[RMDB]
RNA sequence: GGGAACGACUCGAGUAGAGUCGAAAAGACGAACGAAAACACAAAUGUUCCACGGUGCAGAAGGGUCCCUGACAUGAGGAUCACCCAUGUAACUCGGACAGGAUAUGCUUUUGGGAAAAAGAGAGAAUUGACUUUCCUAUUUCGAUAGGAAAGUCAAAAAAGAAACAACAACAACAAC
Reactivity to 2A3 in 0.01 (KOAc 150mM, MgCl2 10mM, bicine 150mM(pH8.5), 24C), signal-to-noise 1, nucleotides 027 to 126: g070a000c060g050a100a000c000g070a000a000a130a000c050a000c060a000a160a130u130g000u130u040c020c000a030c100g070g050u040g000c000a000g020a120a000g080g010g000u020c000c020c000u020g080a050c060a140u170g010a120g010g040a040u060c050a120c060c030c000a000u070g010u050a060a070c000u010c040g000g010a010c000a010g030g030a110u000a050u250g040c000u010u000u070u070g060g000g000a040a090a010a000a020g110a000g020a000g040a050a120
Reactivity to DMS in 0.01 (KOAc 150mM, MgCl2 10mM, bicine 150mM(pH8.5), 24C), signal-to-noise 2, nucleotides 027 to 126: g020a070c080g000a120a110c020g000a070a050a060a080c070a060c110a060a130a090u010g000u000u010c000c040a040c170g000g000u020g010c030a030g000a100a140g000g000g000u000c020c010c020u000g000a100c090a070u010g000a060g010g000a080u000c140a080c020c020c000a090u000g010u000a030a060c040u000c170g000g000a040c050a030g000g000a090u000a060u010g000c020u000u000u000u000g020g000g000a020a030a030a060a070g010a090g000a090g010a100a110